[RMDB]
RNA sequence: GGGAACGACUCGAGUAGAGUCGAAAAGACGCUGAUGCGAUCGACUGUAAGAUAGAUAUACUGAGAAGACAGAUACGUACGGCAAGUAUCGUCGCCAGAAUUACAGUCGCAAAUUGCCGUACGAAGAAUUUACGGAUAGUUUCGACUAUCCGUAAAUAAAAGAAACAACAACAACAAC
Reactivity to DMS in 0.01 (KOAc 150mM, MgCl2 10mM, bicine 150mM(pH8.5), 24C), signal-to-noise 8, nucleotides 027 to 126: g000a120c020g010c010u010g000a120u040g020c020g000a150u020c010g010a030c010u000g010u010a020a010g020a180u040a120g010a180u050a150u030a300c020u010g000a120g010a090a090g010a020c020a080g020a060u010a040c000g020u010a010c010g000g000c010a020a030g000u000a020u010c060g000u000c020g000c040c010a010g000a130a150u000u010a010c010a000g000u010c000g010c210a050a040a080u010u000g000c000c010g000u000a070c110g010a110a100g000a110
Reactivity to 2A3 in 0.01 (KOAc 150mM, MgCl2 10mM, bicine 150mM(pH8.5), 24C), signal-to-noise 9, nucleotides 027 to 126: g060a010c030g000c070u160g110a100u300g040c030g060a090u040c010g000a010c000u000g000u010a020a020g060a140u160a070g150a050u110a060u080a250c020u030g030a040g030a270a050g030a030c040a040g040a050u070a090c000g020u030a000c000g010g000c010a040a010g030u020a050u100c040g010u000c000g060c050c000a040g050a040a020u040u010a000c000a000g000u000c010g000c030a060a100a050u030u010g000c000c000g000u020a030c050g020a040a040g050a060